[RMDB]
RNA sequence: GGGAACGACUCGAGUAGAGUCGAAAAGAUAUGGACUGAACUACCAGGGGAGUAUGCGUUGAAAUCGGAAACGAUGGAGCAUAUGAAAGACUGGCAGUCCUAAGUCAAAGGGUGGUUCGCCACCCAACCCAGUUACCUUGUUCGCAAGGUAACUGGGAAAAGAAACAACAACAACAAC
Reactivity to 2A3 in 0.01 (KOAc 150mM, MgCl2 10mM, bicine 150mM(pH8.5), 24C), signal-to-noise 2, nucleotides 027 to 126: g010a000u080a010u140g000g020a000c010u000g000a150a060c110u070a060c300c000a040g020g030g050g020a150g020u020a000u020g000c050g160u280u040g070a080a080a030u010c020g000g000a100a090a000c020g010a000u050g040g020a030g000c000a000u060a010u070g090a040a060a070g270a050c000u000g020g000c010a000g030u000c000c000u020a090a040g060u030c070a100a130a010g010g030g010u010g050g000u010u090c210g060c100c010a010c000c000c000a000a070
Reactivity to DMS in 0.01 (KOAc 150mM, MgCl2 10mM, bicine 150mM(pH8.5), 24C), signal-to-noise 2, nucleotides 027 to 126: g000a000u010a300u000g000g000a040c010u000g000a050a100c060u010a290c020c000a020g010g010g000g020a300g000u000a000u000g000c050g020u000u000g000a100a180a000u000c010g000g030a040a060a150c000g000a000u000g000g000a130g010c000a000u010a030u000g000a090a090a140g100a080c000u000g000g000c000a000g000u000c000c000u000a020a120g010u000c030a100a090a090g000g010g010u000g000g000u000u010c280g000c020c010a040c000c000c000a040a010